[RMDB]
RNA sequence: GGGAACGACUCGAGUAGAGUCGAAAAGACAGGGCACGCUCGCACAUCAUGUCGAAUGCUCUGCGCGCCAGCGCGAUUGUCCGCAUCGCGUGAUGUAUUCGGCCGCCGCCCAAUCGGGUCUGCGCGAUCAGGGCAUUACUUUCGAGUAAUGCCCUGAAAAAGAAACAACAACAACAAC
Reactivity to 2A3 in 0.01 (KOAc 150mM, MgCl2 10mM, bicine 150mM(pH8.5), 24C), signal-to-noise 4, nucleotides 027 to 126: g040a010c080a030g010g000g010c030a020c080g070c000u070c020g080c000a010c020a050u090c010a020u090g240u240c020g040a110a000u010g010c010u040c040u080g000c000g000c000g010c030c110a080g000c000g000c000g090a120u110u130g090u180c060c070g000c030a020u030c020g000c020g030u040g010a040u030g030u060a160u150u120c030g030g010c010c040g000c000c010g020c000c000c000a000a050u030c040g030g000g020u040c060u050g010c040g000c010g040a040
Reactivity to DMS in 0.01 (KOAc 150mM, MgCl2 10mM, bicine 150mM(pH8.5), 24C), signal-to-noise 3, nucleotides 027 to 126: g030a140c080a100g010g020g040c060a100c170g030c010u000c050g000c300a050c000a060u000c070a070u000g000u040c090g000a110a090u020g000c000u010c060u040g000c000g030c000g000c220c210a200g010c010g020c010g000a100u040u010g000u020c120c100g000c020a070u000c000g000c020g000u010g070a000u010g010u010a080u020u010c020g010g000c080c070g030c050c060g000c000c010c010a050a040u080c050g010g000g000u000c020u020g000c050g020c030g000a150